Structure probing data (DMS and 2A3) for a 170-nucleotide construct. It was measured as part of the RMDB library 15KLIB. Conditions: 150 mM KOAc, 10 mM MgCl2 and 150 mM bicine (pH 8.5), 24 C. For DMS the reverse transcriptase was MarathonRT.

RNA sequence: GGGAACGACUCGAGUAGAGUCGAAAAACCGAGGGGGGUUCGAACUCAAGAAGAGAAGAUUUUCGAGGAAAUACUCCCAAGAAGUUCCCGGAGGGAUCCAAGAGACGGACGACUUUCCCCUAUUGGUCAGCCCACACCUUCGGGUGUGGGAAAAGAAACAACAACAACAAC
Reactivity to DMS in 0.01 (KOAc 150mM, MgCl2 10mM, bicine 150mM(pH8.5), 24C), signal-to-noise 1, nucleotides 027 to 129: a080c040c020g000a080g060g000g010g060g080g000u030u020c080g030a110a100c140u000c060a070a100g000a020a040g020a140g030a170a060g000a080u000u000u050u050c080g020a030g030g020a080a100a030u060a100c040u000c000c060c050a250a150g030a080a300g020u000u090c020c000c010g040g000a080g000g020g050a070u030c060c110a000a000g010a080g000a100c130g020g000a010c120g010a090c160u060u000u010c030c020c000c170u050a100u030u060g000g000u030c040a130g040
Reactivity to 2A3 in 0.01 (KOAc 150mM, MgCl2 10mM, bicine 150mM(pH8.5), 24C), signal-to-noise 2, nucleotides 027 to 129: a000c000c000g000a050g000g000g000g000g000g000u040u030c040g010a040a010c050u030c050a070a070g060a010a020g070a000g000a080a020g020a040u070u030u000u130c000g020a030g010g040a020a070a090u100a100c090u000c000c000c010a000a000g020a000a000g020u000u000c000c000c000g000g000a010g060g040g000a000u050c020c000a040a080g030a000g000a100c030g020g010a000c000g070a030c010u040u030u050c000c000c000c000u000a260u120u040g070g000u060c040a010g040